[RMDB]
RNA sequence: GGGAACGACUCGAGUAGAGUCGAAAACGCGGUGAACUUAACCGCCGUGGCGGCCACGUUUGGGUGGGCCUCGAACAGCUGGGCAAGGUCUGCGCCCGGGGGCUCGGGUGAGCGGCGAGUCUUCAGCGGGCCUAUUUGACUUCGGUCAAAUAGGCCCAAAAGAAACAACAACAACAAC
Reactivity to 2A3 in 0.01 (KOAc 150mM, MgCl2 10mM, bicine 150mM(pH8.5), 24C), signal-to-noise 1, nucleotides 027 to 126: c070g000c000g010g000u160g080a210a020c070u100u100a070a050c000c000g030c000c020g010u010g000g020c000g010g140c000c010a010c100g040u040u300u170g100g000g000u000g000g000g000c010c030u000c010g110a140a160c060a030g070c000u040g000g000g000c010a010a000g010g090u010c010u060g000c020g000c010c000c060g000g000g000g050g000c080u100c080g020g040g000u030g040a020g050c000g010g050c040g000a000g000u010c080u120u040c070a020g000c000
Source: RMDB library OK1LIB, as collected in RNAgym. This 177-nucleotide RNA was probed chemically with 2A3. High 2A3 reactivity points to a flexible backbone, as in loops and unpaired stretches.